Notes: An RNA of 207 nucleotides, treated with 2A3 and read out base by base.
[RMDB]
RNA sequence: GGGAACGACUCGAGUAGAGUCGAAAACUAGACCUGAAGCGGCAGGCAUGGCGUGAGGCUGGCUUCACAGAGCAGCGAUCACUGCCCGCUUCCAACGGUGGGAGGAUAACAGGCCGCUGCAUUGCAAGCCCAACUCGGUCCAGAGCCUCAUUAAACACAUAAGUGCGAACUUCGGUUCGCACUUAUGAAAAGAAACAACAACAACAAC
Reactivity to 2A3 in 0.01 (KOAc 150mM, MgCl2 10mM, bicine 150mM(pH8.5), 24C), signal-to-noise 1, nucleotides 027 to 156: c010u010a040g050a110c050c000u010g010a200a050g060c020g130g030c130a020g000g050c010a040u010g000g010c030g080u200g090a020g000g060c100u050g020g020c060u040u000c040a100c080a130g170a010g000c000a010g000c000g000a070u050c020a000c200u050g080c000c000c000g010c000u040u000c050c010a030a030c080g000g000u020g030g020g000a010g090g010a130u040a170a060c000a000g080g040c000c060g020c070u000g000c000a050u060u050g010c080a010a010g020c010c000c030a090a200c020u050c020g050g000u130c040c000a000g040a040g130c060c010u000c000a020u100u210a050a100a000c070a000

The RNA was probed in 150 mM KOAc, 10 mM MgCl2 and 150 mM bicine (pH 8.5) at 24 C.